[RMDB]
RNA sequence: GGGAACGACUCGAGUAGAGUCGAAAAAGCAUUGGAACGCCGAGGGGAUGUCUCCCAAGAAGAAAAAGAGAGGAUUCAAGAAGUGGGAGACUUCCCCAUAACGCUGGAGACAUCCUGGAAGGGGAAAGUUAAACAGUAAGUUCGCUUACUGUUUAACAAAAGAAACAACAACAACAAC
Reactivity to DMS in 0.01 (KOAc 150mM, MgCl2 10mM, bicine 150mM(pH8.5), 24C), signal-to-noise 5, nucleotides 027 to 126: a080g010c070a080u000u010g010g010a150a120c140g010c030c050g020a150g000g000g020g010a020u000g000u000c000u000c000c000c010a040a080g000a140a090g010a040a040a060a090a130g010a140g010a120g010g020a170u010u000c030a060a110g010a120a150g000u000g010g010g000a040g000a010c010u000u000c000c000c000c000a010u000a030a080c170g010c030u000g010g010a120g010a080c090a060u000c020c030u010g010g020a090a080g010g000g010g000a090a060a070
Reactivity to 2A3 in 0.01 (KOAc 150mM, MgCl2 10mM, bicine 150mM(pH8.5), 24C), signal-to-noise 4, nucleotides 027 to 126: a000g050c040a070u080u110g060g020a120a050c060g040c070c040g050a070g030g000g010g000a000u020g010u010c000u000c010c000c020a010a030g080a040a010g050a010a110a030a060a000g160a010g010a040g130g040a090u100u070c060a100a050g050a130a030g230u020g010g000g000a010g000a000c000u000u000c000c000c000c000a000u010a000a000c010g000c020u010g010g000a020g010a020c020a040u030c010c010u040g030g060a090a050g020g010g000g040a010a040a030